[RMDB]
RNA sequence: GGGAACGACUCGAGUAGAGUCGAAAACGCCAUUUUGAGAAGGCUGUCAUCCUGAAAGAUACACACCCCUUCAGGUGUACGUAACCUCAAAUGCUGGAGCUUUGGGAGGAUACCAAGUUCGCCCUCCCCAACAUCGUGUUUUCGAACACGAUGUUGGAAAAGAAACAACAACAACAAC
Reactivity to 2A3 in 0.01 (KOAc 150mM, MgCl2 10mM, bicine 150mM(pH8.5), 24C), signal-to-noise 2, nucleotides 027 to 126: c030g020c010c010a030u110u060u040u050g070a100g000a070a040g130g050c060u070g080u030c040a080u150c000c010u000g020a120a030a000g040a020u300a100c200a010c030a090c100c140c000c020u010u030c030a020g000g000u000g000u020a020c020g020u030a020a070c020c010u000c010a010a020a020u070g000c060u090g040g010a020g030c010u060u120u060g050g020g000a120g130g000a030u030a080c030c020a090a010g020u030u000c020g030c010c000c010u020c060c020
Reactivity to DMS in 0.01 (KOAc 150mM, MgCl2 10mM, bicine 150mM(pH8.5), 24C), signal-to-noise 4, nucleotides 027 to 126: c070g020c050c030a100u000u000u000u000g020a040g000a080a250g000g000c060u000g010u000c020a060u000c010c000u010g000a030a050a010g020a110u010a130c170a150c280a090c190c090c020c060u000u000c030a040g000g010u000g020u030a030c070g000u010a100a170c210c010u000c020a010a040a020u010g020c100u000g020g010a040g020c060u000u000u010g030g010g000a060g010g000a080u010a100c090c120a030a080g010u000u000c050g000c030c000c000u000c020c030